[RMDB]
RNA sequence: GGGAACGACUCGAGUAGAGUCGAAAACCGGCCCGAAGGGUUGAGUAGCACCCAGAGGGAGGAAAUCACACGGAGAGAAACAGACAAAUCACCUCCAGAGGACCCCUUCAGCGAACAGAAGAGUCUCAUAUCCUGGCGUUCGCGCCAGGAAAAAGAAACAACAACAACAAC
Reactivity to 2A3 in 0.01 (KOAc 150mM, MgCl2 10mM, bicine 150mM(pH8.5), 24C), signal-to-noise 2, nucleotides 027 to 129: c000c000g020g010c000c000c010g000a070a040g020g020g000u000u020g020a040g030u210a020g030c070a070c000c000c010a020g030a050g030g000g000a010g000g000a010a040a050u190c030a050c030a020c060g020g010a000g000a030g000a030a060a030c050a030g160a000c030a070a080a030u040c010a030c030c000u000c000c010a010g030a020g000g000a060c010c000c000c020u040u080c020a020g000c000g030a000a000c000a020g040a030a000g030a060g100u000c020u000c030a110u080a090
Reactivity to DMS in 0.01 (KOAc 150mM, MgCl2 10mM, bicine 150mM(pH8.5), 24C), signal-to-noise 3, nucleotides 027 to 129: c000c040g100g030c020c020c000g090a300a140g000g000g190u000u000g050a060g000u080a070g010c110a030c110c000c010a040g010a300g040g060g000a030g040g010a110a060a040u050c040a050c110a070c180g000g050a070g000a080g000a120a090a070c080a020g030a020c130a010a080a110u030c050a090c040c000u000c000c000a110g020a050g000g050a060c100c030c000c000u020u030c080a190g000c070g010a000a020c000a050g040a070a000g000a020g000u060c060u010c000a040u020a180